[RMDB]
RNA sequence: GGGAACGACUCGAGUAGAGUCGAAAAUCGGUACGUCAUGAUCUGGCCCUCGCGGCCGCGCAGAGGCCCGUACACUAGCGCCUGAUCAGCGCAGGCCGAGUACCAUGAUCUAUCAUGAUCUGGUACCCUCUUUCUUGUUGUUCGCAACAAGAAAGAGAAAAGAAACAACAACAACAAC
Reactivity to DMS in 0.01 (KOAc 150mM, MgCl2 10mM, bicine 150mM(pH8.5), 24C), signal-to-noise 5, nucleotides 027 to 126: u000c020g000g000u000a060c040g010u010c080a100u000g010a030u000c010u000g000g000c020c060c050u000c090g000c080g000g010c080c110g010c090g000c120a120g010a110g000g020c020c020c040g000u010a050c100a080c230u010a080g010c210g010c010c010u010g010a050u000c040a250g000c060g010c110a120g020g000c040c020g020a050g020u000a020c000c010a030u010g020a010u000c020u000a150u020c230a120u020g000a010u000c000u000g000g010u000a010c000c090
Reactivity to 2A3 in 0.01 (KOAc 150mM, MgCl2 10mM, bicine 150mM(pH8.5), 24C), signal-to-noise 4, nucleotides 027 to 126: u030c010g010g000u040a070c030g050u050c120a140u110g020a030u010c030u040g020g000c020c000c020u030c030g050c100g040g010c020c050g020c030g000c050a050g070a120g130g000c020c050c020g040u090a060c110a080c160u080a030g020c020g010c050c000u030g000a040u030c020a020g000c040g000c030a010g090g070c020c020g020a020g000u010a010c010c000a040u250g000a000u000c030u090a280u290c100a090u300g000a000u000c010u000g000g000u010a020c010c000